[RMDB]
RNA sequence: GGGAACGACUCGAGUAGAGUCGAAAAUUAAUCCUCCCGGGAGAGCCGCUAAGGGGGAAACUCUAUGCGGUACUGCCUGAUAGGGUGGUUGCGAGUGCCCCGGGAGGUCUCGUAGAGCCGUCGUAAAAGAUGCAUAUAUGUUCGCAUAUAUGCAUCUAAAAGAAACAACAACAACAAC
Reactivity to DMS in 0.01 (KOAc 150mM, MgCl2 10mM, bicine 150mM(pH8.5), 24C), signal-to-noise 6, nucleotides 027 to 126: u010u000a120a150u010c010c000u000c000c010c000g010g000g010a120g020a300g000c000c000g010c020u010a120a170g010g000g000g000g020a120a090a110c010u000c000u000a300u010g000c010g010g010u000a030c010u000g000c000c000u000g010a160u010a100g000g000g020u000g010g000u000u000g000c050g000a040g020u010g000c040c000c000c010g010g000g000a010g000g000u000c000u010c020g000u000a120g000a060g010c040c020g000u000c060g010u010a060a070a100
Reactivity to 2A3 in 0.01 (KOAc 150mM, MgCl2 10mM, bicine 150mM(pH8.5), 24C), signal-to-noise 3, nucleotides 027 to 126: u050u010a040a070u040c000c000u000c000c000c010g000g030g000a190g000a010g030c020c020g030c080u070a120a150g010g000g010g030g050a040a020a010c000u000c000u000a020u090g010c000g000g020u000a000c010u010g020c010c000u130g110a210u190a130g030g040g010u000g000g030u070u100g030c020g060a100g060u100g070c030c010c000c000g000g010g000a000g000g010u000c000u000c000g040u070a040g030a020g100c040c040g070u100c030g030u080a020a060a030